[RMDB]
RNA sequence: GGGAACGACUCGAGUAGAGUCGAAAAAGUUCAAGACCAGCCUGGCCAACGUGGUGAAGCCCUGUCUCUAUUAAAAAAAUACAAAAACUAGCUGGGCAAGGUGCCAGGCACCUGUAAUCCCAGAUACUGGAGAGGCUGAGACAGAAGAAUCGUUUGAAGUCUAAUCGUAAUUCGUUACGAUUAGACUAAAAGAAACAACAACAACAAC
Reactivity to 2A3 in 0.01 (KOAc 150mM, MgCl2 10mM, bicine 150mM(pH8.5), 24C), signal-to-noise 1, nucleotides 027 to 156: a010g040u110u100c060a020a010g070a090c000c010a020g010c010c020u030g030g000c000c010a110a030c080g040u060g010g040u100g080a070a030g000c010c030c000u040g040u000c010u000c010u040a130u200u210a030a080a060a000a000a010a100u250a080c060a020a120a000a020a000c040u030a050g070c050u030g000g000g000c010a020a030g000g000u020g020c030c040a050g030g000c000a000c000c000u040g020u050a000a040u040c020c000c010a000g010a040u080a080c050u040g040g010a040g010a030g070g020c030u010g010a000g030a010c010a010g020a020a010g010a020a050u100c040g000u060u040u050g040a050
Reactivity to DMS in 0.01 (KOAc 150mM, MgCl2 10mM, bicine 150mM(pH8.5), 24C), signal-to-noise 1, nucleotides 027 to 156: a140g030u010u020c030a050a110g020a110c020c040a080g000c020c020u010g020g000c050c050a080a040c040g040u030g000g000u010g000a130a250g000c000c000c040u000g000u000c080u000c000u000a140u000u030a000a000a020a010a060a020a120u000a120c050a060a040a060a060a120c050u010a020g000c010u010g000g020g000c070a120a030g020g000u000g000c020c090a190g000g030c030a000c000c020u000g040u000a110a060u000c000c010c000a140g000a100u000a050c130u020g010g010a140g040a070g000g050c050u030g010a040g000a100c030a080g000a030a100g000a070a060u000c060g030u010u000u010g010a030
Chemical mapping of a 207-nucleotide RNA with 2A3 and DMS.
For 2A3 the reverse transcriptase was SuperScript II with manganese.
The data come from the RNA Mapping Database (RMDB), library OK3TST.
The DMS profile rests on 1,880 reads.